[RMDB]
RNA sequence: GGGAACGACUCGAGUAGAGUCGAAAACGCGACGUGGACAGCAAGCCGGUGCGCGUCGAUUCGCUGGCUGAGCGCGCCAUGCGUCUGACGGCCGACGAGAAGGCGGACAUCCUGCUGAAGCAGGGCACCAAAUCGUACUGUUCGCAGUACGAUUUGGAAAAGAAACAACAACAACAAC
Reactivity to DMS in 0.01 (KOAc 150mM, MgCl2 10mM, bicine 150mM(pH8.5), 24C), signal-to-noise 4, nucleotides 027 to 126: c110g010c020g020a090c080g020u000g010g020a110c060a080g000c070a110a110g010c200c090g020g010u000g020c060g010c020g010u000c060g010a110u010u000c030g010c020u010g020g020c020u010g000a220g010c040g010c050g010c140c190a070u000g010c000g000u000c020u020g010a200c050g000g010c030c000g000a040c020g000a060g020a090a110g000g010c020g000g000a120c140a060u000c000c020u000g010c000u010g000a120a150g000c000a030g000g000g010c160a090
Reactivity to 2A3 in 0.01 (KOAc 150mM, MgCl2 10mM, bicine 150mM(pH8.5), 24C), signal-to-noise 3, nucleotides 027 to 126: c040g000c020g060a040c030g040u050g050g070a020c020a030g010c030a150a010g030c030c030g060g000u050g000c060g010c020g080u010c010g030a110u060u060c030g000c030u030g030g000c030u050g050a050g030c050g010c010g010c110c040a170u290g010c000g030u070c030u030g060a050c040g000g020c020c000g030a040c020g010a010g040a090a030g040g010c020g000g000a020c010a070u080c010c000u020g020c040u140g060a090a020g000c010a010g010g000g010c020a010

Overview
The record gives the reactivity of an RNA of 177 nucleotides to DMS and 2A3. The data come from the RNA Mapping Database (RMDB), library OK2TRN. Reactivities are given for positions 27 through 126. High DMS reactivity at an A or C suggests that its Watson-Crick edge is free. The RNA was probed in 150 mM KOAc, 10 mM MgCl2 and 150 mM bicine (pH 8.5) at 24 C.